The record gives the reactivity of an RNA of 177 nucleotides to DMS.
The RNA was probed in 150 mM KOAc, 10 mM MgCl2 and 150 mM bicine (pH 8.5) at 24 C.
Values cover nucleotides 27 to 126.
The DMS profile rests on 1,546 reads.

RNA sequence: GGGAACGACUCGAGUAGAGUCGAAAAAAAAAAGAUAUGGACGUGACCCAGUGAAAUAAGGCGUUGAAAUAGCAUCGGAAACGAUGCUAUGGAGCCUUUGAGUAACUGCACGUCCUAAGUCAAAAAACCAUAACUUGUUGUUCGCAACAAGUUAUGGAAAAGAAACAACAACAACAAC
Reactivity to DMS in 0.01 (KOAc 150mM, MgCl2 10mM, bicine 150mM(pH8.5), 24C), signal-to-noise 2, nucleotides 027 to 126: a000a050a050a050a100a100g010a030u000a300u030g000g000a010c010g020u010g010a300c230c260c190a020g010u020g000a090a180a240u010a020a020g020g000c000g020u000u000g020a070a080a030u010a000g000c000a010u000c020g000g000a090a040a090c000g010a020u000g010c000u010a000u000g000g000a050g020c000c000u000u000u000g000a040g010u040a080a000c010u000g000c010a000c010g010u010c000c000u000a030a070g000u000c020a010a060a080a050a100a100